[RMDB]
Chemical mapping of a 177-nucleotide RNA with DMS and 2A3. Source: RMDB library OK2TST, as collected in RNAgym. 2A3 adducts were read by reverse transcription with SuperScript II with manganese. As a SHAPE reagent, 2A3 marks flexible, mostly unpaired nucleotides at the ribose 2'-OH. The reactions ran in a buffer of 150 mM KOAc, 10 mM MgCl2 and 150 mM bicine (pH 8.5), at 24 C. The 2A3 profile rests on 774 reads.

RNA sequence: GGGAACGACUCGAGUAGAGUCGAAAACGAUCUCUUUGAGACCCGCAAGAAGCGGAACAACAUCAAGCUCUACGUCCGUCGUGUGUUCAUCAUGGACGACUGCGAGGAGUUGGUGCCUGAGUGGCUCCCGGAAGGGGUGAUUCGUCACCCCUUCCGGAAAAGAAACAACAACAACAAC
Reactivity to DMS in 0.01 (KOAc 150mM, MgCl2 10mM, bicine 150mM(pH8.5), 24C), signal-to-noise 1, nucleotides 027 to 126: c090g010a040u030c070u000c000u000u000u010g010a130g040a030c160c000c000g030c050a070a150g000a120a140g030c010g010g010a060a120c030a100a160c030a080u000c050a040a150g000c040u000c010u000a100c010g010u000c010c020g010u000c110g080u010g020u020g000u010u000c150a170u020c250a040u000g030g010a020c010g000a050c030u030g010c000g000a300g030g010a050g020u000u000g010g000u000g000c020c080u040g000a070g030u000g000g000c060u000c030
Reactivity to 2A3 in 0.01 (KOAc 150mM, MgCl2 10mM, bicine 150mM(pH8.5), 24C), signal-to-noise 1, nucleotides 027 to 126: c030g080a080u000c010u000c010u080u070u100g040a040g070a060c040c050c010g090c070a070a080g180a150a000g110c010g040g000a010a040c010a010a010c000a030u040c020a000a090g080c010u000c010u040a010c020g130u020c190c020g030u000c020g030u140g030u000g070u140u180c060a200u030c010a030u080g060g060a000c030g030a020c030u080g040c000g060a090g040g030a010g030u040u030g020g000u040g000c000c050u090g020a080g030u090g010g000c000u020c000